This 207-nucleotide RNA was probed chemically with DMS and 2A3.
For 2A3 the reverse transcriptase was SuperScript II with manganese.
DMS adducts were read by reverse transcription with MarathonRT.
For DMS, 1,810 sequencing reads were counted.

RNA sequence: GGGAACGACUCGAGUAGAGUCGAAAACGAUGCCCCUUCGGGGGCAUCGCGAAAAGCUGAGUGGCGCAGUGGAAGCGUGAUGGGCUCAUAACCCAUAGGUCACAGGAUCGAAACCUGUCUCAGCUACCAGAACAGUCAAACGUUUCGACGUUUGAAAACUUUGGAAGAACUUCGGUUCUUCCAAAGUAAAAGAAACAACAACAACAAC
Reactivity to DMS in 0.01 (KOAc 150mM, MgCl2 10mM, bicine 150mM(pH8.5), 24C), signal-to-noise 1, nucleotides 027 to 156: c000g020a010u000g010c000c000c000c050u000u000c200g030g020g010g050g000c000a000u000c030g000c000g010a070a150a110a100g000c000u000g010a040g000u000g010g030c030g000c040a170g020u000g020g000a110a100g000c000g050u000g010a020u000g010g010g020c000u030c300a160u000a000a080c010c010c010a060u010a020g030g010u010c050a070c080a030g000g000a060u010c080g010a300a140a090c010c000u000g020u000c000u010c030a030g000c000u000a080c020c020a130g020a150a220c040a120g000u010c010a000a000a000c000g010u020u000u000c270g010a070c000g000u010u010u000g000a030a060a050
Reactivity to 2A3 in 0.01 (KOAc 150mM, MgCl2 10mM, bicine 150mM(pH8.5), 24C), signal-to-noise 2, nucleotides 027 to 156: c010g000a000u010g000c050c000c000c060u030u100c210g040g010g000g000g000c010a000u000c000g010c010g000a050a030a010a000g000c000u010g000a010g000u030g050g010c040g000c030a030g030u150g260g190a140a020g000c000g000u040g010a010u010g010g000g000c010u000c110a100u220a150a030c000c000c010a010u020a010g080g020u090c020a010c000a010g000g060a070u150c060g030a040a040a080c000c000u000g010u010c000u000c000a040g000c010u010a050c000c020a040g050a140a080c050a030g090u050c040a030a010a010c010g000u010u050u100c250g080a040c000g010u000u010u020g030a030a040a010